This 207-nucleotide RNA was probed chemically with 2A3. The RNA was probed in 150 mM KOAc, 10 mM MgCl2 and 150 mM bicine (pH 8.5) at 24 C.
RNA sequence: GGGAACGACUCGAGUAGAGUCGAAAAAGCCCGUAAGGGUGAGGUGGUUCGCCUUCAACUUAAAUGCUAGUCUAUUAUAAGGCUACAUUCCCAAAUUGCGGGAACACCCUAAUGCUCUCACUUCCAAGCUGACAUUUGAAAGAAUGCAGUGGCCAGGGCGUGGGGAAUAGUUCGCUAUUCCCCACGCAAAAGAAACAACAACAACAAC
Reactivity to 2A3 in 0.01 (KOAc 150mM, MgCl2 10mM, bicine 150mM(pH8.5), 24C), signal-to-noise 1, nucleotides 027 to 156: a000g090c010c010c000g000u080a050a220g030g020g030u120g100a020g000g030u170g000g240u110u170c100g030c000c080u060u140c040a130a120c080u100u120a090a000a000u070g040c140u010a030g010u030c000u050a140u300u140a130u210a300a000g010g010c000u000a050c000a000u080u150c040c080c000a020a240a140u100u100g010c040g000g030g000a040a000c030a140c010c000c070u130a030a050u170g030c010u020c000u010c070a040c060u140u020c030c000a040a140g000c010u010g090a250c050a000u110u140u080g200a050a040a000g010a030a030u010g000c030a000g000u000g090g050c090c070a040g000g030
Record summary:
The 2A3 profile rests on 278 reads. Source: RMDB library RSTRND, as collected in RNAgym.